This 177-nucleotide RNA was probed chemically with 2A3 and DMS. The reactions ran in a buffer of 150 mM KOAc, 10 mM MgCl2 and 150 mM bicine (pH 8.5), at 24 C. It was measured as part of the RMDB libraries RFM100 and RFMREP.
RNA sequence: GGGAACGACUCGAGUAGAGUCGAAAAGAAAGAAAGAAAGAACUGACCCCCGGCGGAGGUCCCGCAAUUUGGGUAAAGUCAUCGAUACCCUUACGUGCGGAUUCGCCGACCUCAUGGGGUACAUCAAUAUUCUGGUCUAUUUCGAUAGACCAGAAUAAAAAGAAACAACAACAACAAC
Reactivity to 2A3 in 0.01 (KOAc 150mM, MgCl2 10mM, bicine 150mM(pH8.5), 24C), signal-to-noise 5, nucleotides 027 to 126: g080a030a100a020g060a060a080a000g070a030a120a020g040a070a040c080u050g030a010c010c000c000c000c020g000g000c010g010g000a020g030g120u090c060c000c010g000c000a020a020u010u000u010g010g000g000u050a050a050a020g060u110c060a100u260c090g020a020u020a040c000c000c000u010u020a100c200g040u020g010c000g010g010a010u020u020c010g000c010c000g040a100c000c020u110c050a090u170g000g000g000g000u030a020c000a010u070c010a010a070
Reactivity to DMS in 0.01 (KOAc 150mM, MgCl2 10mM, bicine 150mM(pH8.5), 24C), signal-to-noise 5, nucleotides 027 to 126: g000a090a100a130g010a120a090a100g010a120a110a140g010a100a110c150u020g010a170c040c000c000c010c090g010g020c040g020g000a050g020g000u020c220c000c010g000c000a040a070u000u010u000g010g000g010u000a000a050a260g000u030c220a090u060c060g010a300u000a010c000c000c000u000u010a020c180g020u000g000c020g000g000a070u000u000c030g010c010c000g000a080c100c100u010c140a080u030g000g000g000g020u010a030c080a060u020c100a060a100